RNA sequence: GGGAACGACUCGAGUAGAGUCGAAAAAUCAAUUCGUUGAUGCAUUGGGGGUCGCUGCGCUAGAGGCUAUAGAGGCUGAAGCCUCCACGGCUACCCACCUAUAGCUACCCACCUAGCGAUAGCGACGGAGGCACCCUUUGACUGGCUUCGGCCAGAAAGGAGACAGAAGAUUCGUCUUCUGUCUCCUAAAAGAAACAACAACAACAAC
Reactivity to 2A3 in 0.01 (KOAc 150mM, MgCl2 10mM, bicine 150mM(pH8.5), 24C), signal-to-noise 1, nucleotides 027 to 156: a010u130c050a020a040u220u110c100g030u030u070g060a120u070g040c150a070u100u090g060g000g000g040g000u040c000g030c010u000g010c020g000c020u000a000g010a010g000g010c000u000a000u010a000g220a110g140g030c020u030g040a020a000g010c000c000u070c050c020a040c020g000g010c040u090a120c070c120c050a030c010c000u000a010u030a010g000c000u030a070c070c140c000a030c030c010u000a000g000c010g170a180u050a040g000c000g030a010c000g000g010a030g000g000c000a090c000c000c000u000u010u140g080a040c000u000g010g030c030u040u190c270g060g020c010c040a010g000a090a030